[RMDB]
RNA sequence: GGGAACGACUCGAGUAGAGUCGAAAACACAGGCGACUUAAUCGGAGAGCGGUUACACGCGAGGAAGAUGAAAUUAUUACAUCAGUAGACUCGAGAUUACUACAACUUGCGUUGCUAUCUGAAAUAAGAACUAUUGAUCAUUCGUGAUCAAUAGUUCAAAAGAAACAACAACAACAAC
Reactivity to 2A3 in 0.01 (KOAc 150mM, MgCl2 10mM, bicine 150mM(pH8.5), 24C), signal-to-noise 7, nucleotides 027 to 126: c070a000c030a020g130g050c050g070a060c050u090u170a070a060u090c020g020g000a020g000a000g030c000g030g050u090u140a080c080a000c060g020c010g000a000g030g030a080a140g010a020u030g050a060a060a070u300u260a120u100u160a090c010a020u000c010a010g020u020a010g040a060c030u010c110g060a100g030a140u130u160a040c010u010a010c000a090a010c010u020u020g000c010g040u030u110g020c010u030a030u040c010u020g040a050a100a060u180a100a050
Reactivity to DMS in 0.01 (KOAc 150mM, MgCl2 10mM, bicine 150mM(pH8.5), 24C), signal-to-noise 6, nucleotides 027 to 126: c060a090c150a090g010g000c060g010a120c060u000u010a080a150u000c010g010g020a060g020a050g010c020g010g000u010u010a080c190a050c020g010c000g000a010g000g000a100a120g000a030u010g010a070a070a130u010u020a100u000u000a110c030a010u000c020a070g010u000a050g010a090c100u010c090g010a080g010a120u000u010a090c010u010a030c040a120a090c030u010u000g010c040g030u000u000g010c000u010a050u000c020u000g010a020a070a090u010a050a120

This 177-nucleotide RNA was probed chemically with 2A3 and DMS.
Source: RMDB library M2PK90, as collected in RNAgym.
2A3 adducts were read by reverse transcription with SuperScript II with manganese.
The reactions ran in a buffer of 150 mM KOAc, 10 mM MgCl2 and 150 mM bicine (pH 8.5), at 24 C.